[RMDB]
RNA sequence: GGGAACGACUCGAGUAGAGUCGAAAAUGUGCCGGGUGCUCGACACAUCGGAGGAGUGCCCAACGGAGUUCGAUUUCCGCGGGAAUUAUUUGGGCGAUGCGGGGGCGGCGGCGAUUGUUCGCACGGACGCCCACUCACGUUUCGACGUGAGUGGGCGAAAAGAAACAACAACAACAAC
Reactivity to DMS in 0.01 (KOAc 150mM, MgCl2 10mM, bicine 150mM(pH8.5), 24C), signal-to-noise 2, nucleotides 027 to 126: u000g010u010g020c030c040g020g000g030u000g020c050u010c020g000a200c080a060c060a050u020c090g010g000a140g010g000a100g020u000g000c010c000c030a080a110c120g010g010a080g010u010u000c110g000a150u000u000u000c010c020g000c150g010g010g010a050a080u000u000a100u000u010u000g000g000g000c040g020a080u000g010c070g000g000g000g000g010c050g020g010c040g010g010c020g000a070u010u010g010u010u000c020g020c040a110c110g020g000a220
Reactivity to 2A3 in 0.01 (KOAc 150mM, MgCl2 10mM, bicine 150mM(pH8.5), 24C), signal-to-noise 1, nucleotides 027 to 126: u070g010u100g060c060c060g000g020g030u020g000c070u050c060g120a090c060a030c030a220u110c060g130g050a100g010g040a000g030u040g000c000c000c000a000a040c040g030g020a040g030u140u190c040g100a180u050u080u000c040c000g000c030g000g060g000a020a110u190u100a060u100u200u040g050g020g030c080g040a060u130g000c000g010g000g000g000g000c050g000g000c010g010g000c060g020a040u040u220g080u130u110c020g000c040a020c070g000g040a010
Notes: Conditions: 150 mM KOAc, 10 mM MgCl2 and 150 mM bicine (pH 8.5), 24 C. This 177-nucleotide RNA was probed chemically with DMS and 2A3. The DMS profile rests on 2,603 reads. Values cover nucleotides 27 to 126. The data come from the RNA Mapping Database (RMDB), library OK2TST.